[RMDB]
RNA sequence: GGGAACGACUCGAGUAGAGUCGAAAAGCGAGCAACCACGAAAUGUUUGGUAAAUACAUUAUUGACUCUGUCACUUACUGGGCGAAAAAUUAUGAUAUUGACGGCUUCCGUUUUGAUGAAAUGACACACCCUUAUAUUUAUUCGUAAAUAUAAGGGUAAAAGAAACAACAACAACAAC
Reactivity to 2A3 in 0.01 (KOAc 150mM, MgCl2 10mM, bicine 150mM(pH8.5), 24C), signal-to-noise 4, nucleotides 027 to 126: g020c010g030a020g000c020a010a040c010c020a030c080g040a050a110a100u130g040u060u050u060g040g020u060a030a080a050u080a040c020a020u040u100a070u090u130g030a040c020u020c040u140g020u050c020a020c030u010u130a040c030u020g050g000g000c010g100a010a080a030a010a020u150u100a070u110g070a040u010a060u100u080g020a010c030g050g000c030u090u040c030c020g030u020u020u060u080g050a080u040g020a050a130a110u130g020a000c040a000c000
Reactivity to DMS in 0.01 (KOAc 150mM, MgCl2 10mM, bicine 150mM(pH8.5), 24C), signal-to-noise 7, nucleotides 027 to 126: g020c040g010a070g020c060a100a090c030c030a080c090g010a070a070a070u010g000u000u010u000g020g010u000a050a090a060u000a060c050a040u000u000a100u000u000g010a120c080u010c060u010g020u000c050a050c080u010u010a070c110u000g000g000g010c020g000a030a060a080a040a050u000u000a030u010g000a080u000a050u000u000g010a060c080g000g000c070u000u000c050c030g010u000u000u000u000g010a090u000g000a060a070a060u010g000a080c160a090c220